[RMDB]
This 177-nucleotide RNA was probed chemically with DMS and 2A3.
As a SHAPE reagent, 2A3 marks flexible, mostly unpaired nucleotides at the ribose 2'-OH.
The data come from the RNA Mapping Database (RMDB), library OK2TST.
For DMS, 1,404 sequencing reads were counted.
RNA sequence: GGGAACGACUCGAGUAGAGUCGAAAAUGGCGGAGUCUUCAGUGCUGACGGUAUUUUGGGGUUUCCAACCGAAGAUAGCAUCCAAGUUGAGAUUAUCAGCCGCCAGAUUAAUAACAUAUUCAGGAACGGAUCAGUACUUGUUCGCAAGUACUGAUCCAAAAGAAACAACAACAACAAC
Reactivity to DMS in 0.01 (KOAc 150mM, MgCl2 10mM, bicine 150mM(pH8.5), 24C), signal-to-noise 2, nucleotides 027 to 126: u010g000g020c010g010g010a070g000u000c030u000u000c070a090g010u010g000c070u000g020a150c060g000g020u000a070u000u000u000u020g000g000g010g010u010u030u010c040c110a130a070c000c000g010a030a060g000a100u000a020g020c020a130u000c040c130a070a050g010u020u030g040a060g000a060u010u000a110u000c130a140g000c000c010g030c010c010a010g000a100u000u000a050a040u000a070a160c190a050u010a080u000u010c120a110g000g040a130a120c210
Reactivity to 2A3 in 0.01 (KOAc 150mM, MgCl2 10mM, bicine 150mM(pH8.5), 24C), signal-to-noise 1, nucleotides 027 to 126: u040g000g000c020g000g030a020g020u000c020u030u070c000a040g040u010g020c020u030g010a030c030g040g000u030a130u020u120u010u050g050g000g000g050u080u300u050c000c020a020a020c000c010g040a060a010g070a030u210a030g020c000a010u000c010c050a130a020g000u040u150g070a040g000a050u080u140a080u270c050a020g100c000c000g020c000c000a000g020a020u040u040a060a080u190a120a030c030a030u110a080u100u280c100a030g170g030a070a050c060